RNA sequence: GGGAACGACUCGAGUAGAGUCGAAAAAUCCUUAAAUGAGGUAACGGCAGGCGCAGGUCCUGAAAUCGUGAGGUGGCAUGAACAUUAAGCGAAGAAAAGGAGAAUAACUAUUUCGUUCUUUUGAACUAGUCUUUUUAUAGUUCGCUAUAAAAAGACUAAAAGAAACAACAACAACAAC
Reactivity to DMS in 0.01 (KOAc 150mM, MgCl2 10mM, bicine 150mM(pH8.5), 24C), signal-to-noise 4, nucleotides 027 to 126: a100u010c000c010u000u000a060a090a140u010g000a080g010g000u000a070a080c090g010g020c030a040g010g020c060g020c060a060g000g010u010c040c020u000g010a050a080a060u000c060g010u000g000a180g000g010u000g010g000c060a080u000g010a080a070c070a060u000u000a060a190g010c060g000a070a050g010a050a030a080a050g010g000a060g000a100a050u000a060a080c120u000a110u010u000u000c070g000u000u000c020u010u000u010u000g000a050a060c150u000
Reactivity to 2A3 in 0.01 (KOAc 150mM, MgCl2 10mM, bicine 150mM(pH8.5), 24C), signal-to-noise 2, nucleotides 027 to 126: a020u020c020c000u080u090a190a140a140u260g060a060g010g060u040a090a030c040g030g000c020a010g010g010c040g030c070a000g060g000u000c000c020u010g040a090a010a000u060c040g040u030g010a050g000g040u040g010g000c060a060u080g060a120a000c010a000u060u110a080a010g010c030g050a030a020g040a050a160a020a000g050g010a040g030a060a040u080a080a080c070u100a190u060u090u060c030g040u000u040c030u040u130u040u180g040a050a040c030u010
Chemical mapping of a 177-nucleotide RNA with DMS and 2A3. Conditions: 150 mM KOAc, 10 mM MgCl2 and 150 mM bicine (pH 8.5), 24 C. Reactivities are rounded to 0.1 and cut off at 0 and 3. Reactivities are given for positions 27 through 126. It was measured as part of the RMDB library VIROID.